The record gives the reactivity of an RNA of 177 nucleotides to DMS and 2A3. Conditions: 150 mM KOAc, 10 mM MgCl2 and 150 mM bicine (pH 8.5), 24 C. For DMS, 3,190 sequencing reads were counted. 2A3 adducts were read by reverse transcription with SuperScript II with manganese.
RNA sequence: GGGAACGACUCGAGUAGAGUCGAAAAUCGCUAAGCUUCGGCUUAGCGAAAAGUCGCGGCUUGAGGGCGUGUACGGCAGCGCACACACACGACCCUCAAGCCAAAGCAUCGUGUUCGCACGAUGCAACAUAGGCAGAAUCUUCGGAUUCUGCCUAUGAAAAGAAACAACAACAACAAC
Reactivity to DMS in 0.01 (KOAc 150mM, MgCl2 10mM, bicine 150mM(pH8.5), 24C), signal-to-noise 3, nucleotides 027 to 126: u000c010g010c000u000a010a000g000c000u000u010c240g020g000c000u000u000a000g000c010g000a000a010a050a070g020u000c100g020c290g000g000c000u000u000g000a020g030g010g020c010g010u000g010u010a040c110g000g010c110a070g010c190g000c070a040c070a070c080a060c020a030c010g000a140c010c000c000u000c000a010a010g020c000c010a000a020a080g000c010a000u000c000g030u000g010u000u020c190g020c010a030c000g000a000u010g000c000a070a070
Reactivity to 2A3 in 0.01 (KOAc 150mM, MgCl2 10mM, bicine 150mM(pH8.5), 24C), signal-to-noise 3, nucleotides 027 to 126: u020c000g000c000u000a010a000g000c000u040u160c230g080g010c000u000u000a000g000c000g010a000a020a000a000g040u040c040g030c110g120g000c000u000u010g020a010g020g000g000c030g000u010g020u030a040c070g040g050c050a090g130c080g050c110a010c020a000c000a000c000a030c090g300a300c010c000c010u000c000a000a010g000c000c000a000a000a000g000c000a000u000c000g000u010g020u050u060c180g000c070a000c000g010a010u000g010c000a000a010